[RMDB]
RNA sequence: GGGAACGACUCGAGUAGAGUCGAAAAUGGAUUCGACGCCGGUGAUGAAACUUUAGGUGCAUGCCGAGUUGGUAACAGAACUCGUAAAUCCACUGUUGCAACUUUCUAUAGUUGCCAAUGACGAAACCUACGGGGAAUACGCUCUCGCCGCGUAAGCCACCACUAUACCGUUCGCGGUAUAGUGGUGAAAAGAAACAACAACAACAAC
Reactivity to DMS in 0.01 (KOAc 150mM, MgCl2 10mM, bicine 150mM(pH8.5), 24C), signal-to-noise 2, nucleotides 027 to 156: u010g020g010a180u000u000c050g050a110c020g040c020c020g020g060u000g000a130u010g010a140a120a060c030u000u000u020a110g010g000u010g010c060a040u000g030c070c000g010a200g000u000u000g010g000u000a100a170c070a220g010a040a030c000u000c000g000u000a040a130a190u010c050c020a040c050u000g000u000u020g000c010a030a030c010u000u010u040c120u000a050u000a060g020u000u000g040c010c050a040a060u000g000a110c040g000a040a080a060c050c030u010a070c010g020g000g030g040a140a110u000a110c050g010c010u000c070u000c020g000c040c010g010c030g040u000a050a150g020c040
Reactivity to 2A3 in 0.01 (KOAc 150mM, MgCl2 10mM, bicine 150mM(pH8.5), 24C), signal-to-noise 3, nucleotides 027 to 156: u080g020g010a030u060u080c030g020a030c040g070c140c040g020g030u050g030a110u060g030a070a060a090c060u100u110u130a070g010g020u050g010c050a030u120g030c040c000g010a020g000u020u010g030g030u050a050a010c020a070g040a050a020c000u010c020g050u070a050a040a050u040c060c010a020c030u040g030u060u060g000c000a000a010c020u050u170u180c140u240a100u130a180g000u000u000g000c040c010a050a100u070g050a030c050g040a060a030a030c010c030u040a020c060g000g010g000g070a020a050u130a050c060g030c030u010c010u020c040g030c040c030g000c030g000u010a030a020g060c030